[RMDB]
RNA sequence: GGGAACGACUCGAGUAGAGUCGAAAAGCAUGUUUAUGUGAACCUAAGGAUGAAUAUCAGUGACUGUAGAUUAGAAGAACUGAUUAUAGCAUUGGCUGCUUGGUGUUCACUUUAUUUGCAUCUGUGAGUUUCCAACAAGCCCUAAGUUUACUGACAACCAUUAAAUAAUAUUCGUAUUAUUUAAUGGAAAAGAAACAACAACAACAAC
Reactivity to 2A3 in 0.01 (KOAc 150mM, MgCl2 10mM, bicine 150mM(pH8.5), 24C), signal-to-noise 5, nucleotides 027 to 156: g030c010a000u050g050u030u090u080a140u180g020u020g010a020a000c000c000u010a020a020g070g030a100u150g050a140a100u110a020u140c000a010g010u010g160a240c010u040g050u130a050g060a260u110u100a020g060a290a000g020a110a040c000u000g000a020u030u050a050u050a030g000c020a040u040u150g070g000c020u040g020c010u050u010g000g030u120g000u060u000c000a000c000u000u040u020a090u020u080u050g020c040a040u040c060u050g060u030g060a040g040u050u050u070c020c010a020a030c040a080a000g050c010c000c010u070a090a030g000u050u040u050a120c020u040g070a040c030a050a040
Reactivity to DMS in 0.01 (KOAc 150mM, MgCl2 10mM, bicine 150mM(pH8.5), 24C), signal-to-noise 3, nucleotides 027 to 156: g020c030a060u010g010u010u010u000a060u010g020u000g000a020a070c020c020u010a070a070g020g020a110u000g010a150a140u010a090u000c020a030g010u000g000a180c030u010g020u000a100g000a170u020u010a090g020a070a120g020a150a130c010u010g000a060u000u000a080u000a090g020c060a100u000u000g040g040c050u010g010c010u000u000g020g000u010g020u010u010c040a030c050u000u000u000a040u010u010u000g000c030a040u000c040u000g010u000g020a150g020u000u000u010c030c050a070a080c100a060a080g000c000c010c010u000a070a170g010u000u000u000a130c050u000g000a130c050a100a280